[RMDB]
RNA sequence: GGGAACGACUCGAGUAGAGUCGAAAAUCUGAACAGUAUAAUUAUUAGCAUCCUUCAAUGUUAGUCUGCUUUAUUAUUGGUAUAGGUAUUGGCACUGUCCAAUGUAUUACUGCUGACGGUGUUAGUAUAUUUCCGUAGAAUUCGUUCUACGGAAAUAAAAAGAAACAACAACAACAAC
Reactivity to DMS in 0.01 (KOAc 150mM, MgCl2 10mM, bicine 150mM(pH8.5), 24C), signal-to-noise 6, nucleotides 027 to 126: u000c020u000g010a090a120c060a070g010u010a050u000a080a070u000u000a050u010u010a050g010c020a030u000c070c060u000u000c140a080a070u010g000u010u010a050g000u000c100u000g010c060u000u000u000a030u010u000a040u000u000g000g000u010a060u010a040g010g010u000a060u010u010g010g010c030a050c020u000g000u000c010c050a040a040u000g010u010a070u000u000a040c100u000g010c120u000g000a030c030g020g010u000g000u000u000a030g010u000a050
Reactivity to 2A3 in 0.01 (KOAc 150mM, MgCl2 10mM, bicine 150mM(pH8.5), 24C), signal-to-noise 4, nucleotides 027 to 126: u030c020u050g060a070a000c020a030g100u070a080u040a180a100u140u110a030u040u070a030g000c010a020u020c030c020u100u080c040a120a210u110g070u090u060a020g050u010c030u010g070c060u050u100u060a070u110u030a040u030u110g050g020u140a080u060a150g040g040u050a040u060u110g020g000c040a020c090u030g000u000c010c010a030a010u030g010u000a100u090u100a040c050u050g040c030u010g020a010c010g010g000u010g000u030u010a010g020u010a050

The record gives the reactivity of an RNA of 177 nucleotides to DMS and 2A3. The reactions ran in a buffer of 150 mM KOAc, 10 mM MgCl2 and 150 mM bicine (pH 8.5), at 24 C. The 2A3 profile rests on 4,108 reads.